[RMDB]
RNA sequence: GGGAACGACUCGAGUAGAGUCGAAAACUGGGUGGGCUGUGAUCCUAUAUGUAGGGCAGGCCAAGUCCUUGUUCCACUCCUUCUUGCAGUGGAUCUUGCCGCUUCUCUGAACAUGAUUGAAAUGCCCACAGCACUUGCAGAGCAAGCAGAAAAGACAGUGACUAGUACUAUUCGUAGUACUAGUCACAAAAGAAACAACAACAACAAC
Reactivity to 2A3 in 0.01 (KOAc 150mM, MgCl2 10mM, bicine 150mM(pH8.5), 24C), signal-to-noise 5, nucleotides 027 to 156: c030u030g050g030g020u030g010g010g000c010u040g100u120g250a070u070c020c040u120a090u030a080u300g150u100a050g000g030g000c070a090g040g010c080c020a020a010g040u080c040c040u070u120g060u060u020c010c000a020c010u040c040c020u130u240c060u100u190g040c080a010g000u020g000g010a030u020c010u010u050g020c000c000g020c040u200u090c020u020c000u030g030a070a040c030a110u090g010a090u040u060g010a050a080a050u100g010c010c000c000a020c010a000g010c000a030c010u020u040g000c020a010g020a010g190c010a000a000g000c010a010g120a120a100a010a000g100a020c120a030
Reactivity to DMS in 0.01 (KOAc 150mM, MgCl2 10mM, bicine 150mM(pH8.5), 24C), signal-to-noise 2, nucleotides 027 to 156: c030u000g010g020g040u010g000g010g040c010u010g000u010g010a080u010c010c050u000a070u000a110u000g020u020a010g010g010g010c070a100g000g010c050c060a050a100g020u000c050c030u000u030g020u000u000c000c010a020c030u000c060c070u000u000c160u000u000g050c070a070g020u000g000g010a030u000c030u000u010g020c020c020g020c030u000u000c000u010c020u000g000a070a070c040a060u010g000a200u000u000g020a050a110a050u010g000c000c000c060a050c000a140g000c000a030c030u010u000g010c030a120g010a110g020c000a080a030g000c030a100g010a090a080a060a100g020a200c090a190